[RMDB]
RNA sequence: GGGAACGACUCGAGUAGAGUCGAAAAUGAAAGUUUCAUUUUUACUAAUGUGAUUUUCAUGGGGAUAAGACCCUAUCAUGGUUAUAAUGACUUUUGGUGUAUCCAUCUUCCAAUAGAAUGGCAACUAAGAAGCAGUUUCUUUCGAGAAACUGCUUCUAAAAGAAACAACAACAACAAC
Reactivity to 2A3 in 0.01 (KOAc 150mM, MgCl2 10mM, bicine 150mM(pH8.5), 24C), signal-to-noise 1, nucleotides 027 to 126: u090g000a000a000a000g000u000u050u030c010a010u000u020u090u060u050a190c200u140a000a000u020g000u000g030a170u080u000u130u000c070a070u140g000g000g050g000a000u050a180a030g100a000c050c000c000u000a020u190c050a090u000g010g000u000u100a020u090a140a090u130g140a060c070u110u000u000u130g090g000u090g020u060a000u010c000c000a000u070c060u010u000c000c000a050a030u080a150g050a190a000u010g010g000c060a080a000c000u050a020